RNA sequence: GGGAACGACUCGAGUAGAGUCGAAAAACGGUCAUAUACGUAUGACCGAAUGAGCAUAACAGGGCCACCCCAAAGCGUUCACAUUGUGGCCCCUGUCAGAUUCUGGUAAAUCUGCGAGUUCCGCUAAAUUAGGUAACUCUCUUCGGAGAGUUACCAACUGCCGUUAAUACUUCGGUAUUAACGGCAGAAAAGAAACAACAACAACAAC
Reactivity to 2A3 in 0.01 (KOAc 150mM, MgCl2 10mM, bicine 150mM(pH8.5), 24C), signal-to-noise 2, nucleotides 027 to 156: a000c000g010g000u010c000a000u020a000u000a010c300g140u000a020u000g000a000c010c000g080a060a040u060g000a000g000c090a020u120a180a030c010a100g000g040g020c000c000a050c020c040c010c000a040a170a060g090c050g130u190u160c070a130c070a250u120u140g000u020g020g000c040c080c000c000u040g020u010c000a000g000a080u020u100c060u280g000g010u050a010a030a030u000c010u000g000c020g010a090g040u060u010c000c000g020c090u040a120a040a040u150u110a020g000g000u010a010a000c000u000c000u020c020u040u060c080g040g000a030g000a000g000u010u000a000c000c000a000a000